RNA sequence: GGGAACGACUCGAGUAGAGUCGAAAAACCUUGCAGAGUGAGUUCUAUUCAGCAAUGGAUAGUAUUUACGAAGUCAUGUAAAUCGUAAUAUCUAGAGGAAGGUGAAGUCGUAACAAGGUUUCCGUAGCUACUAGUCGAGGUUCGCCUCGACUAGUAGAAAAGAAACAACAACAACAAC
Reactivity to 2A3 in 0.01 (KOAc 150mM, MgCl2 10mM, bicine 150mM(pH8.5), 24C), signal-to-noise 1, nucleotides 027 to 126: a000c000c000u010u020g050c050a040g040a110g290u040g020a070g030u100u040c010u030a020u020u000c010a010g010c000a000a140u030g030g010a000u000a020g020u080a020u010u010u010a020c020g020a030a000g050u040c020a030u270g190u300a030a040a060u010c000g010u050a040a040u060a090u280c040u050a080g030a030g080g010a070a040g040g020u040g040a030a000g050u080c020g030u030a040a000c020a020a020g060g000u010u010u010c040c020g050u040a040g050
Reactivity to DMS in 0.01 (KOAc 150mM, MgCl2 10mM, bicine 150mM(pH8.5), 24C), signal-to-noise 2, nucleotides 027 to 126: a040c010c000u000u010g030c100a150g020a300g000u010g020a050g010u000u000c040u000a040u010u000c000a020g010c300a100a160u030g030g000a010u000a010g010u000a040u000u000u000a030c000g000a070a160g000u000c080a010u010g010u010a010a210a200u010c060g010u010a050a080u010a090u020c150u010a120g000a070g030g020a300a050g040g000u000g000a040a050g000u000c030g000u000a010a180c060a010a060g000g000u000u020u000c000c010g030u000a080g000
Overview
Chemical mapping of a 177-nucleotide RNA with 2A3 and DMS. For 2A3 the reverse transcriptase was SuperScript II with manganese. Reactivities are given for positions 27 through 126. Conditions: 150 mM KOAc, 10 mM MgCl2 and 150 mM bicine (pH 8.5), 24 C.